[RMDB]
RNA sequence: GGGAACGACUCGAGUAGAGUCGAAAAUAUGCACGCGGUUGCAGGUGAGUACGCGUGUAUGGCGUUGCUGACACCCACGAGCAGUGCGCUGUCGCGCGCUGUUUCAAGUGGCCGCCUGCGCUAGAGAAGUCUCAGGUGCAUUCGUGCAUCUGGGGCUAAAAGAAACAACAACAACAAC
Reactivity to DMS in 0.01 (KOAc 150mM, MgCl2 10mM, bicine 150mM(pH8.5), 24C), signal-to-noise 9, nucleotides 027 to 126: u030a020u010g000c000a000c040g010c010g010g010u030u040g010c020a030g000g010u010g010a100g030u010a020c010g020c000g010u000g010u010a010u010g010g010c070g010u000u000g000c030u000g000a150c110a070c070c010c030a070c130g000a020g000c000a010g010u000g010c000g010c000u020g010u040c220g000c000g010c000g000c000u000g000u000u010u010c080a130a130g020u000g000g000c010c020g000c010c010u000g000c010g010c180u020a090g010a120g010a140
Reactivity to 2A3 in 0.01 (KOAc 150mM, MgCl2 10mM, bicine 150mM(pH8.5), 24C), signal-to-noise 9, nucleotides 027 to 126: u190a020u030g010c010a000c010g010c010g040g050u150u300g010c010a020g020g030u030g020a120g040u110a010c010g000c000g000u010g000u010a020u060g030g000c070g040u050u180g030c030u030g020a030c010a060c030c000c000a010c020g000a000g000c000a000g000u010g000c010g000c040u140g130u300c230g000c000g000c000g000c000u000g000u000u130u040c030a050a020g000u010g000g000c000c000g000c000c000u010g000c020g000c010u040a030g020a010g020a230

The data come from the RNA Mapping Database (RMDB), library OK1LIB. This 177-nucleotide RNA was probed chemically with DMS and 2A3. For DMS, 115,721 sequencing reads were counted.